This 177-nucleotide RNA was probed chemically with DMS. It was measured as part of the RMDB library OK2TRN. The RNA was probed in 150 mM KOAc, 10 mM MgCl2 and 150 mM bicine (pH 8.5) at 24 C. For DMS, 691 sequencing reads were counted.

RNA sequence: GGGAACGACUCGAGUAGAGUCGAAAAAGUAGCUUUUGGUGGUUGUGUUUUAUUGUACCAGAAAUUCAUGGGUGAAAUCACAUGUAAAGUUAGACAUCAAGCGGCAAACAAACGACAGCGACAGAAACAUCAUCGAGUUGUUCGCAACUCGAUGAUGAAAAGAAACAACAACAACAAC
Reactivity to DMS in 0.01 (KOAc 150mM, MgCl2 10mM, bicine 150mM(pH8.5), 24C), signal-to-noise 1, nucleotides 027 to 126: a080g020u000a070g000c030u010u000u000u000g000g010u000g020g070u000u000g030u000g000u000u000u000u010a080u000u030g000u010a130c090c070a150g010a030a050a150u030u010c090a080u010g000g000g000u000g000a030a060a090u030c060a010c030a030u010g010u010a060a080a050g010u000u000a070g010a110c120a030u010c080a020a050g050c090g000g010c020a050a060a070c170a030a010a080c100g000a050c110a040g000c050g000a070c060a120g000a140a050a130